[RMDB]
RNA sequence: GGGAACGACUCGAGUAGAGUCGAAAACUCGGUUAAUUCGUUAACCGAGACUUCUUAAACAUCUUUUCAUCACAUAGAUGGUAAAUAUUCAAAGAUGUUCGAAUGCGAUAAACUUCGGUUUAUCGAAAUGCUUACUAUUCUUCGGAAUAGUAAGCAUAAAAGAAACAACAACAACAAC
Reactivity to DMS in 0.01 (KOAc 150mM, MgCl2 10mM, bicine 150mM(pH8.5), 24C), signal-to-noise 7, nucleotides 027 to 126: c000u000c000g000g000u000u000a010a020u000u020c160g010u000u000a000a010c000c000g000a010g010a030c080u000u000c010u000u000a100a040a020c000a010u000c000u000u000u000u010c010a020u000c010a150c280a130u010a160g010a020u000g010g000u010a060a070a110u010a090u010u010c210a030a020a010g000a010u000g010u000u000c180g010a100a080u000g000c000g000a010u000a000a000a010c010u000u010c180g030g010u000u000u000a000u000c000g010a030a080
Reactivity to 2A3 in 0.01 (KOAc 150mM, MgCl2 10mM, bicine 150mM(pH8.5), 24C), signal-to-noise 8, nucleotides 027 to 126: c000u000c010g000g000u020u010a010a010u070u070c110g030u040u020a000a000c000c000g010a000g000a010c010u060u040c000u020u150a060a050a000c000a010u000c010u020u050u090u100c010a020u010c020a040c050a300u210a100g020a040u010g000g020u030a050a160a060u270a090u090u120c040a000a000a010g010a010u010g010u020u020c050g120a210a080u180g080c010g000a000u000a010a010a000c000u030u050c150g090g000u010u000u000a000u000c000g000a030a070

The record gives the reactivity of an RNA of 177 nucleotides to DMS and 2A3. The data come from the RNA Mapping Database (RMDB), library M2PK50. High 2A3 reactivity points to a flexible backbone, as in loops and unpaired stretches. For 2A3 the reverse transcriptase was SuperScript II with manganese. Conditions: 150 mM KOAc, 10 mM MgCl2 and 150 mM bicine (pH 8.5), 24 C.